[RMDB]
RNA sequence: GGGAACGACUCGAGUAGAGUCGAAAAUGAAUCUGCCGUUAGCGCAGGCAACACGCCCAAUCGCCUUAAGGUGAAGGCACCCGAGUUCCAACUUACGAAGGAAUUCGCGGAUGCCGGGUCAGCGGAGCGGACCAUCUCGCUUCGGCGAGAUGGUCCGAAAAGAAACAACAACAACAAC
Reactivity to 2A3 in 0.01 (KOAc 150mM, MgCl2 10mM, bicine 150mM(pH8.5), 24C), signal-to-noise 2, nucleotides 027 to 126: u120g000a040a020u030c010u020g030c000c010g220u170u230a090g010c130g030c130a000g000g000c020a000a090c050a050c040g090c020c010c000a010a120u100c000g030c000c010u160u220a090a180g000g000u090g070a100a090g030g000c000a000c000c000c050g000a000g000u000u000c010c010a050a000c040u120u140a060c130g050a040a070g020g000a000a000u000u000c000g000c130g010g010a090u010g000c000c010g000g020g000u010c020a000g020c040g050g010a010g110
Reactivity to DMS in 0.01 (KOAc 150mM, MgCl2 10mM, bicine 150mM(pH8.5), 24C), signal-to-noise 1, nucleotides 027 to 126: u040g030a010a220u060c070u000g050c000c030g040u130u000a090g010c060g040c050a050g020g070c150a080a060c100a070c300g070c010c000c020a080a130u000c000g000c030c000u020u000a170a100g040g110u000g110a150a160g010g000c000a030c000c000c020g010a000g000u060u000c000c000a040a300c000u000u000a210c210g000a060a260g000g000a000a000u000u000c040g000c120g000g000a060u000g000c000c000g000g010g000u000c000a000g000c100g040g000a020g000
Chemical mapping of a 177-nucleotide RNA with 2A3 and DMS. Values cover nucleotides 27 to 126. 2A3 adducts were read by reverse transcription with SuperScript II with manganese. The RNA was probed in 150 mM KOAc, 10 mM MgCl2 and 150 mM bicine (pH 8.5) at 24 C.